[RMDB]
RNA sequence: GGGAACGACUCGAGUAGAGUCGAAAACAGAGGACCCCUUCAGCGAACAGAAGACGCCCACGGACGGCAGGAGUAAGACCAUAGCGAUGGGGGGAGAUGCUAGGAGUUAGGGGCGACCGAAGCGAGGCAUUAACGAUUGGUUCGCCAAUCGUUAAUGAAAAGAAACAACAACAACAAC
Reactivity to DMS in 0.01 (KOAc 150mM, MgCl2 10mM, bicine 150mM(pH8.5), 24C), signal-to-noise 3, nucleotides 027 to 126: c100a110g010a140g010g000a120c060c010c010c020u010u010c070a090g010c020g000a070a050c070a090g010a050a020g000a130c200g010c020c010c030a100c100g020g000a070c090g010g000c040a050g020g010a100g030u000a060a080g000a090c060c040a050u010a060g010c100g030a100u000g020g000g010g000g000g000a090g010a090u010g000c020u010a060g010g000a100g010u000u020a090g020g010g010g010c030g000a060c020c030g000a090a070g020c070g000a090g010g020
Reactivity to 2A3 in 0.01 (KOAc 150mM, MgCl2 10mM, bicine 150mM(pH8.5), 24C), signal-to-noise 2, nucleotides 027 to 126: c030a020g100a040g080g060a090c000c000c030c000u030u040c000a030g000c000g080a080a030c020a050g080a100a000g100a080c040g080c010c000c000a020c040g040g030a000c020g040g000c000a030g030g070a050g000u090a100a040g070a020c040c040a060u070a060g040c010g120a080u080g000g000g000g000g030g000a030g020a030u100g010c030u060a050g030g030a050g030u020u110a020g040g000g000g000c060g040a020c030c000g010a050a000g030c030g030a040g060g040

Chemical mapping of a 177-nucleotide RNA with DMS and 2A3.
For 2A3 the reverse transcriptase was SuperScript II with manganese.
Conditions: 150 mM KOAc, 10 mM MgCl2 and 150 mM bicine (pH 8.5), 24 C.